RNA sequence: GGGAACGACUCGAGUAGAGUCGAAAAAAACUUUUGUGACUUGCUGAAACGGGACUAAUCUCCUCACCGAGGCUAAGCAAGUAAAAUACGCCUCUCAUAUCCUUACCUGAGGGUGGUAAGGGAAUAACCUGCAACGCUUCCUUCGGGAAGCGUUGAACCAGUACAUAGCCUUCGGGCUAUGUACUGGAAAAGAAACAACAACAACAAC
Reactivity to 2A3 in 0.01 (KOAc 150mM, MgCl2 10mM, bicine 150mM(pH8.5), 24C), signal-to-noise 1, nucleotides 027 to 156: a000a010a040c090u140u080u100u140g070u030g100a050c020u010u040g000c000u030g020a080a000a170c060g010g000g010a000c040u080a110a030u080c020u000c030c030u000c000a000c020c080g010a050g000g020c020u030a000a000g000c000a000a090g070u080a020a060a030a030u080a000c000g020c000c000u010c000u000c020a030u060a050u200c020c000u000u000a000c000c020u050g050a090g010g090g000u040g000g000u000a000a000g000g000g010a000a080u070a030a110c000c080u050g020c030a000a000c000g010c000u000u000c010c000u020u080c270g030g020g000a000a000g010c000g000u000u000g000a000a000